[RMDB]
RNA sequence: GGGAACGACUCGAGUAGAGUCGAAAAGAUAUGGACCGUGAACUACGGUUUAAAUGAGCAACAGCCCUGUUAGCGUCGGAAACGACGCUAACAGGGACAUGCUCGGUAAACCGCACGGUCCUAAGUCCUUAGACGCAAUGUUCGCAUUGCGUCUAAGAAAAGAAACAACAACAACAAC
Reactivity to DMS in 0.01 (KOAc 150mM, MgCl2 10mM, bicine 150mM(pH8.5), 24C), signal-to-noise 1, nucleotides 027 to 126: g000a090u000a300u010g020g020a010c000c010g020u000g000a150a050c240u010a300c000g010g000u000u000u000a020a070a110u000g020a010g010c030a050a090c230a110g020c000c020c000u020g050u000u000a000g010c020g010u000c000g010g020a130a090a230c010g040a030c020g010c010u000a000a000c020a010g000g000g020a000c030a070u010g000c000u000c010g010g000u000a000a000a010c000c000g000c000a000c010g000g010u000c000c000u010a000a050g010u000c010